[RMDB]
RNA sequence: GGGAACGACUCGAGUAGAGUCGAAAACUGACGUCCUGCAAAAGUUCCAGAAGGCUCACGGGCACAACCUCGUGUCGACGAAGUUGCAGCCGGUGCGGUGGAGCGACGUGGGCGGGCUGGAGGAGGCAAUAUCCAGUACUUUCGAGUACUGGAUAUUAAAAGAAACAACAACAACAAC
Reactivity to DMS in 0.01 (KOAc 150mM, MgCl2 10mM, bicine 150mM(pH8.5), 24C), signal-to-noise 9, nucleotides 027 to 126: c070u010g020a110c100g010u000c010c020u000g000c080a070a100a130a150g010u000u010c010c010a090g010a110a120g010g010c030u000c020a030c050g010g010g020c020a220c020a060a050c020c020u000c010g020u000g010u010c230g010a040c010g010a060a050g010u000u000g010c090a140g030c010c010g010g010u000g010c050g010g020u000g010g000a110g000c050g000a090c090g020u000g000g000g010c030g010g000g010c030u000g010g000a100g000g010a100g000g010c120
Reactivity to 2A3 in 0.01 (KOAc 150mM, MgCl2 10mM, bicine 150mM(pH8.5), 24C), signal-to-noise 7, nucleotides 027 to 126: c030u030g050a050c050g090u090c010c010u020g010c020a070a110a040a070g040u080u020c010c010a040g040a220a040g300g010c010u010c010a030c030g010g050g000c030a020c020a060a060c010c010u010c020g010u040g150u140c080g110a040c010g030a050a020g080u130u130g030c060a030g020c020c010g040g000u030g020c030g000g120u150g040g010a030g000c030g050a070c020g010u050g020g010g000c060g030g040g000c020u030g020g030a040g030g040a030g040g000c010